[RMDB]
RNA sequence: GGGAACGACUCGAGUAGAGUCGAAAACGUGAACGCCUCCAUCGAGGCGGCGGGCGCCGGGGAGGCCGGGGGCCGCUUCGGGAUCGUCGCGGACUCGGUGCGCAAACUGGCGAACACUUCCGCGCAGUCAAACGAGCCUAUUCGUAGGCUCGUUUGAAAAAGAAACAACAACAACAAC
Reactivity to DMS in 0.01 (KOAc 150mM, MgCl2 10mM, bicine 150mM(pH8.5), 24C), signal-to-noise 1, nucleotides 027 to 126: c100g020u000g020a060a300c030g010c000c010u000c010c120a130u010c040g000a030g030g040c030g010g000c050g000g010g050c110g040c010c000g030g000g000g000a300g000g010c060c010g000g040g010g000g050c000c030g020c020u020u000c010g030g000g010a080u010c040g050u000c070g020c040g000g000a290c160u000c020g000g020u000g020c090g030c150a030a260a120c070u000g000g000c030g010a080a150c040a060c130u000u010c020c000g000c090g000c110a260g000
Chemical mapping of a 177-nucleotide RNA with DMS. DMS adducts were read by reverse transcription with MarathonRT. The reactions ran in a buffer of 150 mM KOAc, 10 mM MgCl2 and 150 mM bicine (pH 8.5), at 24 C. For DMS, 697 sequencing reads were counted. Source: RMDB library OK2TST, as collected in RNAgym.